[RMDB]
RNA sequence: GGGAACGACUCGAGUAGAGUCGAAAAUCGUGAAGGCGUCGACCACGUCGACGGGACGCCAGGUGCUCGACUUCAUCGGCGGCCCGGCCGGGCAUGAGCAGUGGCGCUCGUUCUACCCCGAGCGGAUCAAGACGGUGCAUCGGAUCGCGCGCACGAGUCGAUACUAGCUGUUCGCAGCUAGUAUCGAAAAAGAAACAACAACAACAAC
Reactivity to 2A3 in 0.01 (KOAc 150mM, MgCl2 10mM, bicine 150mM(pH8.5), 24C), signal-to-noise 1, nucleotides 027 to 156: u000c000g000u020g030a110a060g080g010c010g000u260c070g060a050c010c040a100c080g020u080c060g010a030c000g000g000g030a010c000g000c030c000a030g070g040u020g030c140u060c060g040a070c110u070u050c110a110u000c000g030g000c000g010g030c000c000c040g020g000c010c020g000g000g010c060a050u120g010a010g040c020a000g000u040g050g010c050g010c020u000c000g020u040u040c020u040a100c020c000c000c020g000a020g060c110g040g000a060u160c060a010a060g020a000c040g050g000u110g040c040a070u080c080g050g050a070u000c010g000c000g000c000g000c000a000c000g000a000g040